Notes: The record gives the reactivity of an RNA of 177 nucleotides to 2A3 and DMS. The reactions ran in a buffer of 150 mM KOAc, 10 mM MgCl2 and 150 mM bicine (pH 8.5), at 24 C.
RNA sequence: GGGAACGACUCGAGUAGAGUCGAAAACAGAUGGAACGGCCCUCGAGAGCCUAAUCCUCCCUGAUCCUCAGAUUGAGGGUUCUGGUGUAACUGGUCUUUUGUUAGGGAUUAUGUAGAGUUCAAAUAACGCUUACACUCUUUUCGAAGAGUGUAAGCGAAAAGAAACAACAACAACAAC
Reactivity to 2A3 in 0.01 (KOAc 150mM, MgCl2 10mM, bicine 150mM(pH8.5), 24C), signal-to-noise 2, nucleotides 027 to 126: c020a020g140a110u300g090g020a040a020c010g070g010c000c040c000u030c020g110a100g010a010g030c010c010u030a030a060u070c010c000u010c000c010c000u000g010a010u030c000c000u020c030a160g150a300u190u270g000a070g000g030g000u000u000c050u030g010g000u040g010u070a010a060c100u090g040g070u180c010u000u130u060u050g020u000u100a020g000g070g000a050u080u050a110u300g150u080a070g080a040g080u020u000c010a150a020a030u240a110a060
Reactivity to DMS in 0.01 (KOAc 150mM, MgCl2 10mM, bicine 150mM(pH8.5), 24C), signal-to-noise 3, nucleotides 027 to 126: c050a130g000a200u020g000g020a060a060c030g010g000c000c000c010u010c050g000a060g010a040g010c010c020u010a100a100u020c120c020u000c070c010c020u000g010a020u000c010c000u000c000a150g000a180u010u030g010a010g000g000g000u000u000c080u000g020g000u000g020u010a050a080c200u000g000g000u010c010u000u000u000u010g000u010u000a050g000g000g000a100u010u010a090u000g010u010a100g000a150g010u010u000c040a110a100a080u010a110a150